[RMDB]
RNA sequence: GGGAACGACUCGAGUAGAGUCGAAAAAUCGCGUAUUAACCUCCACACUCGUAUCUCAAAAUAAAUUUCGUCAAAAUUACACUUCGUAAAUACCGUCAAUUUGCUCCAUGCGUCAUUUACAGAGCUUUUACCUAGCAACCUUAUGAUGCGAUAAUACCCGUAACCUCGGUUUCGACCGAGGUUACGGAAAAGAAACAACAACAACAAC
Reactivity to 2A3 in 0.01 (KOAc 150mM, MgCl2 10mM, bicine 150mM(pH8.5), 24C), signal-to-noise 1, nucleotides 027 to 156: a010u000c030g040c000g040u030a070u030u160a200a080c000c000u130c150c050a000c000a050c020u050c030g070u030a200u090c010u000c040a090a090a150a170u210a010a210a090u000u230u000c040g090u110c110a070a140a040a070u050u140a000c000a000c120u160u140c010g050u050a000a100a060u140a000c000c040g030u000c040a120a160u030u000u200g030c050u080c050c040a070u170g000c000g040u030c040a010u000u100u160a070c110a030g070a000g000c110u050u030u050u050a130c000c040u000a000g000c010a040a000c040c000u030u100a000u000g010a040u110g000c000g030a010u030a070a030u080a110c030
An RNA of 207 nucleotides, treated with 2A3 and read out base by base. For 2A3 the reverse transcriptase was SuperScript II with manganese. Reactivities are given for positions 27 through 156.